[RMDB]
Structure probing data (2A3 and DMS) for a 177-nucleotide construct.
The data come from the RNA Mapping Database (RMDB), libraries RFM100 and RFMREP.
For 2A3 the reverse transcriptase was SuperScript II with manganese.
Conditions: 150 mM KOAc, 10 mM MgCl2 and 150 mM bicine (pH 8.5), 24 C.

RNA sequence: GGGAACGACUCGAGUAGAGUCGAAAAUCACGAUUCGUCUUGGUUUUAGAGAUUCUGUUUCGACAGUUUUUUUAGGCGGUGGACGUAUAUAGUUUACUUAAUCGUUUACUAUACGGUGGAGUACUAAAGCUUAAGUUGAAUUCGUUCAACUUAAGCUAAAAGAAACAACAACAACAAC
Reactivity to 2A3 in 0.01 (KOAc 150mM, MgCl2 10mM, bicine 150mM(pH8.5), 24C), signal-to-noise 8, nucleotides 027 to 126: u050c010a010c040g060a060u090u100c050g030u010c030u030u080g090g020u090u030u030u070a030g010a010g000a030u040u000c010u020g060u030u090u090c100g080a030c010a020g000u000u000u000u000u010u040u110a050g020g000c060g040g040u060g020g000a010c010g040u010a030u000a010u000a140g010u000u050u020a020c010u020u040a040a010u040c000g020u000u020u040a070c050u020a030u010a070c020g050g030u040g020g030a040g020u050a060c030u100a090a070
Reactivity to DMS in 0.01 (KOAc 150mM, MgCl2 10mM, bicine 150mM(pH8.5), 24C), signal-to-noise 7, nucleotides 027 to 126: u010c020a050c040g000a160u010u020c060g020u000c010u010u000g000g020u010u000u000u000a040g010a110g000a030u000u000c020u000g010u000u010u030c130g000a020c040a070g010u000u000u000u000u000u010u000a040g010g000c020g000g010u010g010g010a030c030g010u000a090u000a030u000a020g000u000u000u000a000c010u000u000a120a080u020c200g000u000u000u010a020c040u000a020u000a020c140g010g020u000g000g010a110g010u000a080c100u010a030a140